[RMDB]
RNA sequence: GGGAACGACUCGAGUAGAGUCGAAAAGGGAGUCUGCUAUCUUUCCACAGCCCAUAUCAUCCUCACAUUAGUGGGAAAGAUAUUUGCAAAAUGAGCUAUUGUGGAUCGAAUGGGUUGAGGCUGCCCACCGUGGCUGAGGUUUCGACCUCAGCCACGGAAAAGAAACAACAACAACAAC
Reactivity to 2A3 in 0.01 (KOAc 150mM, MgCl2 10mM, bicine 150mM(pH8.5), 24C), signal-to-noise 2, nucleotides 027 to 126: g030g000g020a040g030u050c030u030g020c040u110a020u090c030u020u030u000c000c000a010c000a000g050c000c010c000a030u100a090u000c000a040u040c000c000u220c000a020c000a180u120u150a080g000u060g020g110g000a030a040a010g050a010u010a170u080u070u150g000c030a000a060a090a170u160g030a070g030c020u120a050u200u060g000u050g000g070a010u010c040g100a090a060u090g020g000g000u060u110g010a000g100g010c010u140g250c000c030c000a010

Background: The record gives the reactivity of an RNA of 177 nucleotides to 2A3. 2A3 adducts were read by reverse transcription with SuperScript II with manganese. Source: RMDB library OK1LIB, as collected in RNAgym. The 2A3 profile rests on 797 reads. Values cover nucleotides 27 to 126.